[RMDB]
RNA sequence: GGGAACGACUCGAGUAGAGUCGAAAACAGUCUGUGACUCAGACUCACACACUCAGAGUCACAGUGAGUGAGACUGUGAGAGAGAGAGUCUGUCAGUGUGACACUGUCUGAGUGUGACUGAGUGUCAAGCGUGUCAAAUCUUCGGAUUUGACACGCUAAAAGAAACAACAACAACAAC
Reactivity to 2A3 in 0.01 (KOAc 150mM, MgCl2 10mM, bicine 150mM(pH8.5), 24C), signal-to-noise 2, nucleotides 027 to 126: c010a000g090u080c000u140g110u090g060a010c050u050c140a000g190a090c010u080c040a040c000a000c000a010c060u000c010a000g000a020g020u000c010a000c010a030g060u000g000a010g080u280g090a040g000a000c000u010g040u300g200a070g040a020g010a000g020a000g000a000g070u000c010u010g080u050c000a050g120u030g000u000g030a020c020a010c140u150g080u110c000u000g010a010g020u000g000u000g000a030c040u000g000a010g010u040g030u030c010a000
Reactivity to DMS in 0.01 (KOAc 150mM, MgCl2 10mM, bicine 150mM(pH8.5), 24C), signal-to-noise 2, nucleotides 027 to 126: c100a090g010u000c030u000g010u000g000a070c030u010c060a050g070a100c040u000c120a140c010a030c000a070c010u000c000a020g010a200g010u010c000a020c000a020g000u000g000a060g000u000g000a070g000a030c020u000g010u000g010a130g010a200g010a140g000a170g000a000g000u010c010u000g010u000c000a050g010u000g000u000g000a010c000a130c150u000g010u000c010u010g010a020g000u000g030u000g000a070c090u000g000a030g000u000g020u000c030a010

This 177-nucleotide RNA was probed chemically with 2A3 and DMS. Reactivities are rounded to 0.1 and cut off at 0 and 3. The data come from the RNA Mapping Database (RMDB), library OK2TRN.